[RMDB]
RNA sequence: GGGAACGACUCGAGUAGAGUCGAAAAAGAAAGUUCGCUUUCUAAAAGGGAUAUGGACCUUGUGGAGAGAGAUUGGUGCGAGGAUCUCGGAAACGAGGGAGCACCAAAUCUCUCGAUGAAACAAGGUCCUAAGUCGUUACACGGUCUUCGGACCGAACGUCGUUAUGACGUUCGCGUCAUAACGACGAAAAGAAACAACAACAACAAC
Reactivity to DMS in 0.01 (KOAc 150mM, MgCl2 10mM, bicine 150mM(pH8.5), 24C), signal-to-noise 2, nucleotides 027 to 156: a060g000a000a010a070g060u000u000c290g010c010u000u000u000c000u000a040a090a080a110g020g020g060a140u000a180u000g010g010a040c000c000u000u000g010u000g020g000a180g010a020g010a020g010a120u000u000g000g050u000g030c030g020a120g020g000a050u000c010u010c000g010g010a180a100a240c010g010a040g000g000g000a110g040c010a080c030c020a000a010a020u000c000u010c010u000c000g000a050u010g000a180a110a080c010a020a050g000g010u010c010c000u000a030a090g010u000c010g000u000u000a100c080a180c080g050g010u000c030u000u000c260g020g020a020c020c010g000a000a010
Reactivity to 2A3 in 0.01 (KOAc 150mM, MgCl2 10mM, bicine 150mM(pH8.5), 24C), signal-to-noise 4, nucleotides 027 to 156: a000g020a000a010a000g010u070u120c160g050c120u030u020u040c060u070a110a120a050a010g080g050g000a030u060a050u160g000g000a000c000c000u000u000g000u010g000g010a020g000a010g000a000g010a010u000u000g000g000u000g000c000g010a160g020g020a010u000c000u000c000g010g020a080a050a020c000g000a000g010g010g000a000g000c000a000c000c000a030a060a000u000c000u030c000u000c000g000a010u000g000a000a010a000c000a000a010g000g010u000c000c000u000a000a000g010u000c000g000u030u060a090c180a030c040g000g000u000c000u050u100c190g110g000a000c000c010g010a040a020